Description
The record gives the reactivity of an RNA of 207 nucleotides to 2A3 and DMS. For DMS the reverse transcriptase was MarathonRT. It was measured as part of the RMDB library OK3TST.

RNA sequence: GGGAACGACUCGAGUAGAGUCGAAAAGCUGGGAUUACAGGCGUGAGCCACCAUGCUCAGCCUGGAUAAUACCUUUUUGCUGUGUAUGGGGGCAACAGUUAGAAUUUAGAGACCUUAAAACUAGUAUAAAUUCUUUCACAGUGGAUAUGAUUUGCUCAUUACGUCAACUAUUCGUAGUUGACGUAAUAAAAGAAACAACAACAACAAC
Reactivity to 2A3 in 0.01 (KOAc 150mM, MgCl2 10mM, bicine 150mM(pH8.5), 24C), signal-to-noise 3, nucleotides 027 to 156: g020c040u030g010g020g040a040u050u030a050c040a010g030g000c100g140u060g010a040g000c010c020a060c020c030a090u190g000c000u010c010a000g000c000c010u010g000g000a020u040a060a030u120a170c020c000u090u060u060u120u160g020c020u020g000u020g020u050a130u130g070g010g000g000g000c010a040a030c000a070g020u040u090a020g000a000a030u000u040u050a060g030a020g050a130c000c000u120u080a040a120a040a050c050u020a030g040u020a030u040a150a050a010u090u020c000u000u050u060c050a050c010a060g060u040g080g070a040u050a070u170g120a090u040u070u120g060c020u010c080
Reactivity to DMS in 0.01 (KOAc 150mM, MgCl2 10mM, bicine 150mM(pH8.5), 24C), signal-to-noise 3, nucleotides 027 to 156: g000c020u000g000g010g020a130u000u000a080c030a010g020g000c020g010u000g030a060g020c000c060a120c210c220a070u010g000c000u000c010a110g020c000c010u000g010g000a050u010a070a070u000a130c010c000u010u000u000u000u010g010c010u000g020u010g020u000a060u000g030g010g010g030g040c040a050a060c060a080g020u010u000a030g000a050a020u000u010u000a060g000a200g010a120c030c010u000u000a080a060a080a160c050u010a070g000u010a140u000a030a040a060u000u000c020u000u010u010c020a060c070a140g000u000g000g000a100u010a100u010g010a190u000u000u000g010c070u000c030